[RMDB]
RNA sequence: GGGAACGACUCGAGUAGAGUCGAAAAACUGGGGUCCCGGGCCCCCUCCCAGGAAUGGGAAUGGGGGGAGAUCGACCGGGUCCCGCAGAACCCGAUGGAGUUCCCAACCUUCCCCUUACGGACAAAAUACGUUAGCACUUCGGUGCUAACAAAAGAAACAACAACAACAAC
Reactivity to 2A3 in 0.01 (KOAc 150mM, MgCl2 10mM, bicine 150mM(pH8.5), 24C), signal-to-noise 5, nucleotides 027 to 129: a000c000u000g000g000g000g000u050c000c000c000g050g020g000c030c010c000c000c000u020c000c000c000a000g040g130a140a070u120g010g010g030a040a120u230g040g010g000g000g040g000a030g040a120u170c070g100a050c000c000g030g000g000u010c000c000c020g000c010a000g020a060a090c000c000c000g000a070u140g040g030a040g010u020u020c000c000c000a040a060c040c010u030u090c000c000c010c000u050u090a050c080g040g030a020c050a010a100a020a040u210a040c100
Reactivity to DMS in 0.01 (KOAc 150mM, MgCl2 10mM, bicine 150mM(pH8.5), 24C), signal-to-noise 1, nucleotides 027 to 129: a010c040u020g030g000g020g030u030c000c040c010g000g060g000c000c020c000c020c030u020c020c000c000a020g010g190a170a110u010g000g000g000a120a070u060g080g010g000g020g040g020a060g020a150u040c170g020a140c050c050g010g000g000u020c000c000c030g030c000a060g030a180a150c020c000c060g010a080u070g040g060a090g020u000u000c000c000c000a130a150c120c050u020u020c020c010c010c040u050u090a150c130g040g030a140c120a110a140a070a110u140a060c220